This 177-nucleotide RNA was probed chemically with 2A3 and DMS. Reactivities are given for positions 27 through 126.
[RMDB]
RNA sequence: GGGAACGACUCGAGUAGAGUCGAAAAACAAAUACUCACGCUGCUAGGCGGGUGCGCACUGCUGUCUGGCCCGGCGCCGCGCUAGGGCGCACACGUAGCGUUGCAAAGGGUAACCGGGCUGAAAAAAACCGUUAAUAUUCUUCGGAAUAUUAACGGUAAAAGAAACAACAACAACAAC
Reactivity to 2A3 in 0.01 (KOAc 150mM, MgCl2 10mM, bicine 150mM(pH8.5), 24C), signal-to-noise 2, nucleotides 027 to 126: a020c030a000a060a020u090a050c010u030c000a050c040g060c040u100g030c040u070a030g130g050c040g030g060g000u020g000c000g000c010a060c060u120g020c010u060g090u240c090u100g020g000c020c000c000g080g000c020g010c010c050g010c000g000c030u030a010g010g030g010c020g000c000a010c000a010c020g080u030a010g000c020g040u050u070g010c040a100a080a090g100g000g000u020a040a030c000c000g030g000g000c030u050g070a100a020a000a000a000a010
Reactivity to DMS in 0.01 (KOAc 150mM, MgCl2 10mM, bicine 150mM(pH8.5), 24C), signal-to-noise 4, nucleotides 027 to 126: a050c110a050a040a080u000a050c020u000c020a090c140g020c030u000g010c070u010a130g010g010c050g010g000g010u000g000c010g000c020a060c040u000g020c040u010g020u010c060u010g020g010c010c020c040g010g020c160g020c010c020g010c030g000c030u010a060g000g000g000c020g010c010a010c020a030c040g020u000a020g010c010g030u000u000g030c090a070a150a140g000g000g000u010a050a110c030c010g000g000g000c020u010g000a000a000a070a090a070a090